This 177-nucleotide RNA was probed chemically with DMS and 2A3. As a SHAPE reagent, 2A3 marks flexible, mostly unpaired nucleotides at the ribose 2'-OH. For DMS, 1,432 sequencing reads were counted. The data come from the RNA Mapping Database (RMDB), library RFM100. The reactions ran in a buffer of 150 mM KOAc, 10 mM MgCl2 and 150 mM bicine (pH 8.5), at 24 C. Values are in units of 0.01, from 0 to 300, in steps of 10. For DMS the reverse transcriptase was MarathonRT.
[RMDB]
RNA sequence: GGGAACGACUCGAGUAGAGUCGAAAAACAGAAACCGCAACAGGGUGUCGCAGUAAUAAUCUUUCAGAAAGCGGGCAGUUUUAUGCCUGAUAUUACACCACGCUUUCGGUUUGGAAAAUAAAAAGGCUUAGAUAUCGCGAUUCGUCGCGAUAUCUAAAAAAGAAACAACAACAACAAC
Reactivity to DMS in 0.01 (KOAc 150mM, MgCl2 10mM, bicine 150mM(pH8.5), 24C), signal-to-noise 1, nucleotides 027 to 126: a130c000a120g010a020a000a010c040c000g030c160a090a040c140a020g000g000g010u000g000u010c070g000c140a050g050u010a010a000u010a030a100u000c020u000u000u010c230a140g000a120a010a040g000c120g000g000g020c010a010g030u030u030u050u040a140u010g000c000c060u000g040a030u000a000u010u000a000c010a260c070c000a040c000g020c000u000u000u020c010g000g000u000u000u060g010g010a070a070a040a180u050a100a040a110a170a120g000g000c110
Reactivity to 2A3 in 0.01 (KOAc 150mM, MgCl2 10mM, bicine 150mM(pH8.5), 24C), signal-to-noise 2, nucleotides 027 to 126: a000c060a040g070a090a000a020c030c030g010c030a020a010c080a160g040g060g060u040g040u020c060g000c070a080g000u020a020a020u010a010a270u040c040u010u220u150c100a030g160a130a060a000g080c040g000g010g000c010a040g000u110u300u150u050a030u030g000c010c000u000g010a000u000a000u000u000a000c000a000c000c000a020c000g170c040u000u010u050c030g000g000u000u000u060g040g010a000a120a120a000u220a080a060a020a050a000g080g010c030